[RMDB]
RNA sequence: GGGAACGACUCGAGUAGAGUCGAAAAUUAGCGAUAAGUAUGCUAACUCGGUUCGUACUUCCUUCUUCUGGGAUAUGGGUACCGUUUGGGAUACAAACUGGGAUUCCAGCCAAUAUUCUGGAUAUCCACAGAUCUAAACCUUCGGGUUUAGAUCUGUAAAAGAAACAACAACAACAAC
Reactivity to 2A3 in 0.01 (KOAc 150mM, MgCl2 10mM, bicine 150mM(pH8.5), 24C), signal-to-noise 1, nucleotides 027 to 126: u080u030a020g020c000g050a100u030a130a160g050u100a080u190g090c020u020a030a070c020u030c010g010g060u050u050c000g020u020a060c080u120u100c010c020u090u130c050u100u080c060u080g000g000g000a000u010a020u010g050g000g010u030a090c050c020g010u020u000u010g070g000g020a080u070a140c030a040a120a030c140u100g110g000g000a090u180u000c020c000a000g000c020c000a080a110u120a090u020u060c000u020g050g000a060u100a020u030c010c010
Reactivity to DMS in 0.01 (KOAc 150mM, MgCl2 10mM, bicine 150mM(pH8.5), 24C), signal-to-noise 1, nucleotides 027 to 126: u000u010a070g010c060g000a060u010a120a210g000u020a100u000g000c010u010a040a050c060u000c020g030g000u000u000c030g000u010a160c130u010u000c010c070u000u010c260u030u000c040u000g000g000g000a010u000a040u000g020g030g000u000a120c060c060g030u000u010u000g000g000g000a080u030a050c050a020a060a030c080u030g020g000g000a180u000u000c060c050a070g000c250c060a050a080u010a040u010u000c000u000g000g000a040u000a110u000c120c120